[RMDB]
RNA sequence: GGGAACGACUCGAGUAGAGUCGAAAAUUCAGCUUGUCACGCACAUAGCGCAACGCCGAGAAAUCUUCUGUCGCAAAGCCAACCGAGUCGAACAGCGUGAUCUGGCGGGCAUCCUUGCGGCCAGCGACCUAAAUCACUGGUUCGCCAGUGAUUUAGGAAAAGAAACAACAACAACAAC
Reactivity to DMS in 0.01 (KOAc 150mM, MgCl2 10mM, bicine 150mM(pH8.5), 24C), signal-to-noise 5, nucleotides 027 to 126: u000u000c040a090g000c060u000u000g020u010c030a090c040g030c050a140c150a090u010a090g010c050g020c060a100a070c100g000c040c040g010a100g000a070a090a090u000c060u010u000c040u010g010u000c040g020c040a050a100a100g010c050c040a060a100c110c020g010a090g010u010c020g000a050a160c060a080g020c170g000u010g000a070u000c020u000g000g010c060g010g020g000c070a040u000c090c110u000u000g020c060g010g020c030c050a050g020c130g000a100
Reactivity to 2A3 in 0.01 (KOAc 150mM, MgCl2 10mM, bicine 150mM(pH8.5), 24C), signal-to-noise 4, nucleotides 027 to 126: u050u030c010a020g010c030u060u050g030u050c020a010c110g050c020a030c020a140u140a060g010c000g000c040a070a050c060g030c040c020g090a050g110a070a130a070u050c030u110u000c010u060g050u030c000g000c070a070a040a030g040c010c010a020a020c030c010g010a010g040u080c010g010a040a050c020a030g040c020g080u050g040a060u030c040u030g010g000c000g040g040g020c010a060u060c040c040u040u070g020c020g010g020c020c000a030g000c020g050a060